[RMDB]
RNA sequence: GGGAACGACUCGAGUAGAGUCGAAAAAUCGGAUCGUACGUCUAGCAUGCUCAGAGAUGCGGUACAUGUCGAUCGUGAGUACCAGGAUCGUACUACUAGCGCUAGAGGUACCGUACGCGUACGGAUCAGUGUGAGAGAGGUUCGCCUCUCUCACACUAAAAGAAACAACAACAACAAC
Reactivity to 2A3 in 0.01 (KOAc 150mM, MgCl2 10mM, bicine 150mM(pH8.5), 24C), signal-to-noise 1, nucleotides 027 to 126: a000u150c060g050g010a010u000c000g000u010a000c000g010u040c000u000a000g010c020a090u240g070c050u110c210a020g000a000g000a070u010g000c030g000g000u010a020c000a030u070g010u010c010g000a010u010c030g130u020g040a090g100u150a190c080c020a010g000g080a010u010c020g090u120a010c010u010a000c000u010a020g080c020g010c080u000a000g000a000g010g000u010a010c020c000g000u010a010c030g010c010g000u000a000c030g100g040a020u030c070
Reactivity to DMS in 0.01 (KOAc 150mM, MgCl2 10mM, bicine 150mM(pH8.5), 24C), signal-to-noise 4, nucleotides 027 to 126: a080u010c070g020g000a020u000c020g010u000a010c030g050u000c020u010a020g020c030a210u010g020c110u000c200a130g000a030g040a010u010g000c000g000g000u000a000c060a160u000g020u000c010g010a010u000c000g040u010g010a280g010u010a210c190c030a030g010g010a010u000c000g000u000a020c060u040a300c110u000a060g020c100g030c020u000a020g000a130g010g020u000a010c020c000g000u000a020c050g010c000g010u000a020c010g020g000a050u000c010

This 177-nucleotide RNA was probed chemically with 2A3 and DMS. DMS adducts were read by reverse transcription with MarathonRT. The RNA was probed in 150 mM KOAc, 10 mM MgCl2 and 150 mM bicine (pH 8.5) at 24 C. For DMS, 3,459 sequencing reads were counted.